[RMDB]
RNA sequence: GGGAACGACUCGAGUAGAGUCGAAAAGAAAGUAAAUAAAUGAAUCCAAGUUUCAAGCACAUUGUCUUUACACUAGUGUGGCAGGCUGGCAGCCUACCAGAUAACCAUUUUGAUUGUUCAUAAAGUGAGUUCGUAUCAAAUUCGUUUGAUACGAACUAAAAGAAACAACAACAACAAC
Reactivity to 2A3 in 0.01 (KOAc 150mM, MgCl2 10mM, bicine 150mM(pH8.5), 24C), signal-to-noise 5, nucleotides 027 to 126: g050a040a040a010g110u110a010a080a110u130a060a100a100u130g050a010a010u000c000c000a010a030g000u010u020u060c030a040a020g000c010a010c000a020u050u050g020u020c020u020u080u080a030c030a020c030u080a070g020u030g000u010g180g000c020a030g050g000c010u020g080g020c070a010g030c000c010u000a020c010c000a010g020a040u050a040a040c030c020a030u050u040u000u020g090a120u010u010g030u020u010c040a060u110a160a070a040g120u100g070
Reactivity to DMS in 0.01 (KOAc 150mM, MgCl2 10mM, bicine 150mM(pH8.5), 24C), signal-to-noise 4, nucleotides 027 to 126: g000a100a080a090g020u010a040a060a110u020a040a080a080u000g000a100a060u020c040c050a070a080g010u020u010u000c030a050a070g000c070a040c050a050u000u010g000u020c080u000u000u020a060c050a060c100u000a060g000u010g030u010g000g000c010a010g010g020c010u020g010g010c160a060g010c020c020u000a020c020c020a060g000a050u010a040a050c040c030a110u010u000u000u010g020a070u000u010g000u000u000c080a050u020a060a060a100g020u010g000